[RMDB]
RNA sequence: GGGAACGACUCGAGUAGAGUCGAAAAAAGGCACUCACCAUUGCAAUUCGGUACAGCGCAGUGCGUCGCCAAUUCGCCCUUCCUGGAGGCGGCCCCCAGGGCAAAGGCAAGGCGGAGGAGGAGGAGGGUAGCGUGAGAGAUUCGUCUCUCACGCUACAAAAGAAACAACAACAACAAC
Reactivity to DMS in 0.01 (KOAc 150mM, MgCl2 10mM, bicine 150mM(pH8.5), 24C), signal-to-noise 1, nucleotides 027 to 126: a090a100g000g000c010a040c090u000c070a090c120c010a050u030u000g000c100a060a180u010u010c070g000g010u000a040c060a100g060c150g020c060a050g040u000g010c030g020u010c130g040c000c000a000a180u000u000c130g010c000c000c050u010u020c060c000u010g030g010a070g010g020c070g000g050c040c000c020c000c050a050g030g000g010c120a040a070a160g010g040c120a030a040g020g020c120g000g010a090g010g010a020g010g000a030g020g000a030g020g030
Chemical mapping of a 177-nucleotide RNA with DMS. It was measured as part of the RMDB library OK2TRN. The RNA was probed in 150 mM KOAc, 10 mM MgCl2 and 150 mM bicine (pH 8.5) at 24 C. DMS adducts were read by reverse transcription with MarathonRT.